RNA sequence: GGGAACGACUCGAGUAGAGUCGAAAAAAGGAUCGAUCUGUUUUCGAUCAUAUAUCAGUUUCGGUAUAGCAAUCAUCAAAGAUCGCAUUUGACAGUUAUGUCAAAGGGACACACCCUUCGCGCGUCCCUGUAGGCCUAAUUUCGAUUAGGCCUACAGAAAAGAAACAACAACAACAAC
Reactivity to 2A3 in 0.01 (KOAc 150mM, MgCl2 10mM, bicine 150mM(pH8.5), 24C), signal-to-noise 8, nucleotides 027 to 126: a000a000g110g000a040u030c010g000a010u020c030u130g170u120u100u040u100c070g010a000u020c030a000u020a000u010a000u020c050a070g080u080u110u290c080g010g000u020a010u030a050g080c130a110a030u020c010a020u010c030a090a060a010g030a030u030c020g010c090a040u020u010u020g020a020c030a040g050u240u210a170u160g010u050c000a000a010a010g030g020g060a010c010a000c000a030c110c010c000u060u100c040g030c000g010c030g060u030c020c000
Reactivity to DMS in 0.01 (KOAc 150mM, MgCl2 10mM, bicine 150mM(pH8.5), 24C), signal-to-noise 5, nucleotides 027 to 126: a060a050g010g000a040u010c010g010a010u010c100u010g020u030u000u000u000c120g010a020u010c040a170u000a010u000a010u000c040a090g010u020u030u020c120g000g000u000a020u010a030g010c280a130a040u000c030a040u010c120a050a080a050g000a030u010c020g010c130a190u000u000u010g000a000c000a020g000u050u040a070u010g010u000c010a000a020a020g000g020g010a080c110a090c220a090c040c030c020u020u020c070g020c110g000c100g000u000c010c000
Chemical mapping of a 177-nucleotide RNA with 2A3 and DMS. The reactions ran in a buffer of 150 mM KOAc, 10 mM MgCl2 and 150 mM bicine (pH 8.5), at 24 C.